[RMDB]
RNA sequence: GGGAACGACUCGAGUAGAGUCGAAAAAUGAGUGCUAGUGAAGCAGGUGUCACUGAGCAAGUCAAAAAGCUGUCUGUCAAGGAUAGUAGUAAUGAUGCCGUAAAACCAAAUAAGAAAGAAAACAAAAUGAUAUUUAGGAGUUCGCUCCUAAAUAUCAAAAAGAAACAACAACAACAAC
Reactivity to 2A3 in 0.01 (KOAc 150mM, MgCl2 10mM, bicine 150mM(pH8.5), 24C), signal-to-noise 1, nucleotides 027 to 126: a000u140g020a070g060u000g010c040u030a010g030u020g040a080a000g000c120a080g140g000u060g030u050c010a000c070u000g000a020g050c090a070a030g060u120c040a050a000a000a050a000g000c020u000g000u020c020u010g200u110c050a070a030g040g000a010u000a040g000u020a010g020u010a070a000u040g040a020u040g000c040c030g060u060a000a060a000a180c020c020a070a110a070u160a000a040g080a110a100a000g230a010a050a010a000c030a000a020a300a060
Reactivity to DMS in 0.01 (KOAc 150mM, MgCl2 10mM, bicine 150mM(pH8.5), 24C), signal-to-noise 3, nucleotides 027 to 126: a090u000g000a090g010u000g020c010u000a070g000u000g010a040a050g020c080a110g000g010u000g020u000c050a050c050u000g010a050g020c010a050a120g040u000c040a050a030a080a220a080g010c000u000g010u000c010u020g000u020c270a110a130g010g000a010u010a020g020u000a090g010u000a100a070u010g000a050u010g010c020c030g000u000a070a040a070a120c050c050a030a110a080u010a060a100g010a070a080a100g010a130a050a080a080c090a030a040a060a120
An RNA of 177 nucleotides, treated with 2A3 and DMS and read out base by base.
For 2A3, 809 sequencing reads were counted.
The reactions ran in a buffer of 150 mM KOAc, 10 mM MgCl2 and 150 mM bicine (pH 8.5), at 24 C.
Source: RMDB library OK2TST, as collected in RNAgym.
For DMS the reverse transcriptase was MarathonRT.